[RMDB]
RNA sequence: GGGAACGACUCGAGUAGAGUCGAAAAGCCGAGCGUGUCGAACGUUGGGCCGGGUCCCAGCGCCACAAACGGCACGGUUACCACGGCGAGCAACACGCCGAAUACCACGAUCGGCACCAGCGCGACCUAGCACGCAUAGUUUCGACUAUGCGUGCUAAAAAGAAACAACAACAACAAC
Reactivity to DMS in 0.01 (KOAc 150mM, MgCl2 10mM, bicine 150mM(pH8.5), 24C), signal-to-noise 2, nucleotides 027 to 126: g000c000c000g000a080g010c080g010u000g010u000c020g000a070a070c040g020u000u000g020g000g020c030c130g000g020g030u000c070c010c010a040g040c020g020c050c070a080c160a080a100a290c230g000g000c000a010c050g010g000u010u000a090c180c230a160c030g010g000c000g000a090g000c160a040a090c180a130c010g000c000c000g010a140a080u000a040c000c010a080c030g000a100u000c020g020g000c000a080c030c050a040g010c110g000c000g000a110c040c020
Reactivity to 2A3 in 0.01 (KOAc 150mM, MgCl2 10mM, bicine 150mM(pH8.5), 24C), signal-to-noise 3, nucleotides 027 to 126: g000c060c010g000a040g060c130g000u010g010u000c000g020a050a070c000g060u010u060g000g010g030c100c130g260g060g100u270c020c000c000a010g030c030g010c030c030a140c130a170a220a040c080g000g000c000a010c000g000g000u010u100a030c040c060a060c070g010g000c010g010a040g000c100a060a040c040a030c140g010c000c000g020a030a070u150a070c020c000a010c040g020a040u020c000g000g000c000a010c000c010a040g050c040g010c010g030a050c000c020
The data come from the RNA Mapping Database (RMDB), library OK2TST.
Chemical mapping of a 177-nucleotide RNA with DMS and 2A3.
For DMS, 1,485 sequencing reads were counted.
The 2A3 profile rests on 2,885 reads.